[RMDB]
RNA sequence: GGGAACGACUCGAGUAGAGUCGAAAAAACGGAGGAUGUGGCCGUUGCACCGGCGGCGGAUCGCAGGUGGCGCCGUCCAAGGUGUAAAACCGGCCGGCGUAGGUGGGGUUUGGCUCGGUCCACACGGCCACUAACUGUCUUUCGAGACAGUUAGUGGAAAAGAAACAACAACAACAAC
Reactivity to DMS in 0.01 (KOAc 150mM, MgCl2 10mM, bicine 150mM(pH8.5), 24C), signal-to-noise 4, nucleotides 027 to 126: a070a060c070g000g000a130g010g000a090u000g020u000g020g010c000c010g010u000u000g010c050a020c010c010g000g020c140g010g000c010g000g010a070u010c060g020c060a200g010g020u010g010g010c020g010c010c000g000u000c010c100a300a130g020g000u010g000u010a030a020a090a060c120c010g000g000c020c000g010g000c080g020u000a090g010g030u000g000g000g020g000u000u000u000g010g010c020u000c070g020g000u010c050c040a060c090a040c060g010g010